The record gives the reactivity of an RNA of 177 nucleotides to DMS.
The RNA was probed in 150 mM KOAc, 10 mM MgCl2 and 150 mM bicine (pH 8.5) at 24 C.
It was measured as part of the RMDB library OK2TRN.
Reactivities are given for positions 27 through 126.
RNA sequence: GGGAACGACUCGAGUAGAGUCGAAAACUCGGCGGCGCGAGCCUGCGGCGGCUGGACCGUCGGCGUGAUUCCCAAGAUGCUGGUGUACCGCGAACUGGCUGAUCACGACGCCGACGAGCUAAUCGUCGAACAAAGGGCGGUUCGCCGCCCUUUGUUCAAAAGAAACAACAACAACAAC
Reactivity to DMS in 0.01 (KOAc 150mM, MgCl2 10mM, bicine 150mM(pH8.5), 24C), signal-to-noise 1, nucleotides 027 to 126: c000u000c080g020g010c010g020g030c030g020c110g020a160g020c030c030u010g050c040g030g000c020g000g020c070u010g030g010a070c030c000g000u000c030g020g000c010g000u030g010a220u000u000c060c020c010a150a100g000a190u010g020c020u010g020g020u000g000u000a100c000c040g000c020g000a130a000c030u000g010g020c020u000g000a140u010c120a120c130g010a100c010g020c010c000g020a010c000g000a070g010c030u000a050a050u000c020g000u010c010